[RMDB]
RNA sequence: GGGAACGACUCGAGUAGAGUCGAAAAUUACCAUGUUUACGACGGCGUUUUCGACGUCCGCUAUUACCGUCAUCAAUCUGUCUUCCGUUCUGACUGAUGACAUGACGAAUUCGCGUUUCGUCACUCGCCCCACAAUCCGGCAAUAGGACAUGAUCAACCCUAAAGGGAAUUUCGAUUCCCUUUAGGGAAAAGAAACAACAACAACAAC
Reactivity to DMS in 0.01 (KOAc 150mM, MgCl2 10mM, bicine 150mM(pH8.5), 24C), signal-to-noise 3, nucleotides 027 to 156: u000u000a070c040c000a120u010g000u010u010u000a140c050g020a050c010g030g010c010g050u010u000u000u000c020g030a060c030g000u000c110c010g020c030u000a080u010u000a060c080c040g020u000c010a010u020c020a070a040u010c010u020g020u000c050u000u020c160c170g010u000u010c010u000g010a050c020u010g020a070u000g010a060c090a160u020g010a050c010g010a050a060u000u010c220g040c080g020u000u000u000c000g000u010c020a100c080u000c060g010c020c010c050c070a120c100a080a080u010c010c020g000g010c040a130a100u010a200g000g010a040c040a050u010g000a140u000c040a100a260
Reactivity to 2A3 in 0.01 (KOAc 150mM, MgCl2 10mM, bicine 150mM(pH8.5), 24C), signal-to-noise 4, nucleotides 027 to 156: u150u030a100c020c010a060u090g040u090u160u090a120c140g040a030c060g000g020c020g000u020u020u030u240c090g020a020c010g000u000c010c010g000c000u040a040u040u060a140c090c000g010u000c000a010u010c010a010a080u000c000u030g020u000c010u150u060c130c090g200u160u130c090u080g010a000c000u020g000a010u010g020a040c030a040u010g000a000c020g020a020a040u040u040c020g000c000g040u060u040u000c000g000u010c010a010c010u000c000g010c000c000c000c020a090c060a100a100u050c020c020g050g020c040a010a070u060a210g080g000a010c020a040u130g020a040u120c040a020a110
The record gives the reactivity of an RNA of 207 nucleotides to DMS and 2A3. It was measured as part of the RMDB library OK3TST. Conditions: 150 mM KOAc, 10 mM MgCl2 and 150 mM bicine (pH 8.5), 24 C. For DMS the reverse transcriptase was MarathonRT.